The record gives the reactivity of an RNA of 177 nucleotides to 2A3. The reactions ran in a buffer of 150 mM KOAc, 10 mM MgCl2 and 150 mM bicine (pH 8.5), at 24 C. Source: RMDB library RFM100, as collected in RNAgym.
RNA sequence: GGGAACGACUCGAGUAGAGUCGAAAAUGUCUCCUCAUCUCAACUAAACGAAAUUUUAUCCAUCGCACACAUGUUCGCAUGUGUUUGCGUAUGGUGCAAUUGAAAUUUCAUUAGGUUGCCUAAUUUGUGACACGCCGUUAUUCGUAACGGCGUGUCAAAAAGAAACAACAACAACAAC
Reactivity to 2A3 in 0.01 (KOAc 150mM, MgCl2 10mM, bicine 150mM(pH8.5), 24C), signal-to-noise 1, nucleotides 027 to 126: u010g040u020c040u010c000c040u090c020a220u040c050u000c020a000a000c010u030a090a020a000c020g000a000a000a000u000u000u000u000a030u000c000c000a000u020c000g000c000a000c000a000c000a000u000g000u020u040c170g030c200a000u000g000u030g040u000u040u220g000c000g080u020a000u000g000g000u050g000c000a020a150u060u160g000a000a000a020u000u000u010c000a020u000u030a030g170g000u000u010g010c000c000u200a180a200u070u050u090g060